[RMDB]
RNA sequence: GGGAACGACUCGAGUAGAGUCGAAAAUGUCACACAGUAGCGAGGGAUGCAAUUAAUUGCAUCUACACCAAGCUCAAGGCUUGGAUUUCGACUAGUGUCGAGUGGUUCCCACUCGCUACGCCCACAAGUUAGCAUGGAAUUUCGAUUCCAUGCUAACAAAAGAAACAACAACAACAAC
Reactivity to DMS in 0.01 (KOAc 150mM, MgCl2 10mM, bicine 150mM(pH8.5), 24C), signal-to-noise 5, nucleotides 027 to 126: u010g020u010c150a130c220a170c130a080g050u000a000g020c000g010a020g000g000g010a010u000g010c000a010a020u000u020a080a080u010u000g010c010a010u000c000u000a060c100a150c020c000a000a010g000c010u000c200a130a110g010g000c000u000u000g000g010a280u000u000u010c000g010a010c000u010a030g010u010g010u000c000g000a000g000u000g000g000u000u000c000c000c000a070c000u000c010g020c020u000a010c010g020c030c010c010a070c190a090a110
Reactivity to 2A3 in 0.01 (KOAc 150mM, MgCl2 10mM, bicine 150mM(pH8.5), 24C), signal-to-noise 7, nucleotides 027 to 126: u080g040u050c010a030c010a010c020a160g020u020a000g000c010g000a010g010g020g010a000u000g010c010a000a040u150u190a170a270u120u020g010c000a000u020c000u020a000c020a020c010c000a010a000g000c010u070c110a080a070g190g000c000u010u010g010g000a060u030u010u000c010g000a000c010u030a030g230u070g140u300c000g000a000g000u030g050g000u010u000c000c000c000a000c000u000c000g000c000u010a000c010g020c010c020c000a080c000a100a030